[RMDB]
RNA sequence: GGGAACGACUCGAGUAGAGUCGAAAAGCAACAAUGGGUGAUCAGCAGCGAAGUCCCUGUAGGCCGCCAGCCCACGGGAAACGUUCAGAGACUAUGUGGUGAUGGGCUUUGACCUCUGCGGUCUGAGCUUAAGAUAUAGUCCGACCCCGGCGAGAGCGUAUUAGAUUAUCUUCGGAUAAUCUAAUACAAAAGAAACAACAACAACAAC
Reactivity to DMS in 0.01 (KOAc 150mM, MgCl2 10mM, bicine 150mM(pH8.5), 24C), signal-to-noise 3, nucleotides 027 to 156: g040c060a090a100c080a080a120u000g010g010g010u010g020a150u000c030a140g020c080a090g040c030g010a070a130g000u000c040c000c000u020g050u000a050g010g020c010c020g010c190c150a180g000c010c010c000a040c020g000g000g000a100a090a070c070g010u000u010c020a140g020a130g000a040c020u000a010u000g020u010g030g040u000g010a160u000g000g010g000c000u000u000u000g010a020c010c000u000c200u000g010c170g020g000u000c010u020g010a040g020c040u000u000a050a060g000a060u000a050u010a040g000u000c010c020g000a190c040c000c010c000g010g000c060g000a170g010a150g030c100
Reactivity to 2A3 in 0.01 (KOAc 150mM, MgCl2 10mM, bicine 150mM(pH8.5), 24C), signal-to-noise 7, nucleotides 027 to 156: g040c020a010a080c010a020a060u070g010g000g030u090g040a270u070c040a030g110c010a000g010c040g040a110a020g040u010c010c000c010u050g030u040a040g010g030c040c040g090c080c020a020g000c000c010c000a010c020g010g000g000a040a050a030c030g020u070u020c050a040g080a000g000a120c000u010a000u040g050u050g030g130u110g110a110u210g020g020g000c020u000u000u020g000a010c010c000u080c250u300g090c180g020g000u000c000u010g000a000g000c000u010u010a040a000g020a010u040a000u000a040g000u000c010c010g020a030c010c010c000c010g030g010c030g010a050g020a010g060c060